The record gives the reactivity of an RNA of 207 nucleotides to 2A3. The 2A3 profile rests on 7,533 reads.
RNA sequence: GGGAACGACUCGAGUAGAGUCGAAAAUCCUAAGUCGUCUUGGAUUUAACAGUUGAAGUGUAGCAAGGCUCGUCGGAAACGACGAGCUGAUGACCUACAUGGAGGACUGUUUGUCAGACGAUAUGGAAAAAGCUAAGUGGCUUCGGCCACUUAGCAAUCAGCAAUAUUAGUUCGCUAAUAUUGCUGAAAAAGAAACAACAACAACAAC
Reactivity to 2A3 in 0.01 (KOAc 150mM, MgCl2 10mM, bicine 150mM(pH8.5), 24C), signal-to-noise 6, nucleotides 027 to 156: u000c000c000u020a080a030g030u000c000g020u010c030u120u230g160g010a090u300u260u150a010a000c010a010g010u030u050g060a060a020g000u000g010u000a000g010c030a130a130g020g000c000u010c000g000u000c010g030g060a080a060a080c010g000a000c000g000a000g010c010u000g000a030u010g020a010c000c010u000a000c000a010u010g010g030a060g060g240a000c000u000g000u000u000u010g000u010c000a010g000a000c000g000a000u010a060u090g010g020a040a070a020a050a010g020c000u030a020a030g000u000g000g000c000u040u040c190g040g000c010c010a000c000u000u000a000g000c000a000a020
The RNA was probed in 150 mM KOAc, 10 mM MgCl2 and 150 mM bicine (pH 8.5) at 24 C. Source: RMDB library RNAMAK, as collected in RNAgym.